RNA sequence: GGGAACGACUCGAGUAGAGUCGAAAACAGUCUUUAUAUCUUCUGUAUAUUAUUUUAAAGUUUAUAGGAGCAAAGUUCGCUUUACUCGCAAUAGCUAUUUUAUUUAUUUUAGGAAUAUUAUCACCUCCCUCGUAAAAAGAUUCGUCUUUUUACGAGGAAAAGAAACAACAACAACAAC
Reactivity to 2A3 in 0.01 (KOAc 150mM, MgCl2 10mM, bicine 150mM(pH8.5), 24C), signal-to-noise 1, nucleotides 027 to 126: c020a030g130u160c020u000u170u000a100u010a050u140c000u080u000c020u010g000u000a100u000a030u160u070a190u250u280u000u140a270a250a000g020u050u050u000a030u000a030g180g030a030g050c100a000a180a000g030u010u010c000g020c000u000u000u000a050c050u050c030g040c060a120a080u020a020g050c030u020a180u070u080u100u000a040u000u170u000a080u150u070u040u150a030g000g000a000a100u060a080u300u060a020u050c020a020c080c000u080c030